RNA sequence: GGGAACGACUCGAGUAGAGUCGAAAAGGCGAUCGCGACCGCGCUCAUGCGGUGGGAGCCGCGCUUGACCGUCACGCGCGUUCAGAUUUCGGCAGCCGCCGCCGAUGCUUUCGCCGGCCGGCAGUUCGUCGACAUCGAAGGCUGGACCGACGAGCAAUCACUGACUAACAUUCGUGUUAGUCAGUGAAAAAGAAACAACAACAACAAC
Reactivity to 2A3 in 0.01 (KOAc 150mM, MgCl2 10mM, bicine 150mM(pH8.5), 24C), signal-to-noise 3, nucleotides 027 to 156: g050g000c000g060a060u070c060g030c060g160a070c050c020g030c020g040c060u200c170a090u280g010c020g010g030u040g010g050g010a030g020c040c010g000c010g000c000u100u100g070a110c050c030g040u070c030a030c110g090c020g000c030g090u040u040c050a070g020a080u050u080u010c000g000g010c000a010g040c020c000g000c010c010g000c010c000g050a080u090g030c020u120u200u150c140g000c000c000g000g010c100c010g000g000c010a060g030u020u100c070g010u040c030g030a030c020a060u060c030g010a050a030g080g000c010u040g040g080a180c020c010g000a020c020g000a010g020c000a020a030
Reactivity to DMS in 0.01 (KOAc 150mM, MgCl2 10mM, bicine 150mM(pH8.5), 24C), signal-to-noise 1, nucleotides 027 to 156: g030g030c030g000a060u000c040g000c030g000a100c010c020g000c030g000c090u000c100a100u010g020c060g010g000u000g010g030g020a210g010c030c000g020c090g030c090u010u040g010a040c000c030g000u010c070a090c060g040c030g000c050g000u000u000c030a160g010a230u000u000u000c010g030g040c000a060g020c010c000g000c010c000g000c010c000g000a120u000g020c110u000u000u010c060g010c020c000g000g000c000c000g060g090c030a030g010u000u010c090g020u000c010g020a180c040a130u030c040g000a040a060g020g020c000u010g030g010a120c040c040g000a010c030g000a040g010c020a230a300